[RMDB]
RNA sequence: GGGAACGACUCGAGUAGAGUCGAAAACUUCGGUCGCCGCGGAUCACUGGCGUCCAGCGGAGAAACAGGAGCUCGUCUCCUUCCUUUCGCUGCUGGCUCCACAUCCGAUCGUCGCUGAAGCUUCAACCCCAUACCGCUUUUCUUAAAUCUUCACUGCGGAUAGAUUGUUGUUCGCAACAAUCUAUCCAAAAGAAACAACAACAACAAC
Reactivity to 2A3 in 0.01 (KOAc 150mM, MgCl2 10mM, bicine 150mM(pH8.5), 24C), signal-to-noise 5, nucleotides 027 to 156: c000u010u010c010g040g060u300c010g020c000c020g000c010g020g010a000u000c000a010c050u000g010g000c020g090u120c000c010a010g000c010g090g000a030g000a030a070a100c300a170g000g000a010g020c080u160c300g280u140c090u000c000c000u010u010c020c000u000u000u020c010g000c020u010g000c010u000g010g000c000u000c000c010a070c000a010u000c010c000g080a220u060c010g000u000c000g000c010u010g000a000a000g020c000u090u100c050a080a150c000c000c040c010a040u140a140c040c080g130c180u120u140u180u140c030u120u250a140a210a190u110c050u230u160c110a070c150u100g030c060